Conditions: 150 mM KOAc, 10 mM MgCl2 and 150 mM bicine (pH 8.5), 24 C. An RNA of 177 nucleotides, treated with DMS and read out base by base.
[RMDB]
RNA sequence: GGGAACGACUCGAGUAGAGUCGAAAAUCGGAUGGGAAGAGUAUAUCCUACGGGAAUCCCCCGGUUCCCCUUAUGUCCAGCCCCUCCCCGGUCCGAGUGAAGGGGGACUCCGGGACUCCUUGCAUGCGUACAUGAAGAUCUUCGGAUCUUCAUGUACAAAAGAAACAACAACAACAAC
Reactivity to DMS in 0.01 (KOAc 150mM, MgCl2 10mM, bicine 150mM(pH8.5), 24C), signal-to-noise 1, nucleotides 027 to 126: u020c050g010g010a080u000g020g000g020a090a040g000a150g010u010a110u000a060u010c020c030u000a090c090g010g000g010a060a100u000c050c020c000c020c170g020g000u000u000c010c000c000c050u000u000a080u000g000u010c030c070a140g010c050c030c010c030u000c010c010c000c080g030g020u010c020c080g000a090g010u000g000a030a020g010g010g010g000g000a010c030u000c060c240g020g020g010a100c000u000c010c010u010u000g020c130a040u000g030c250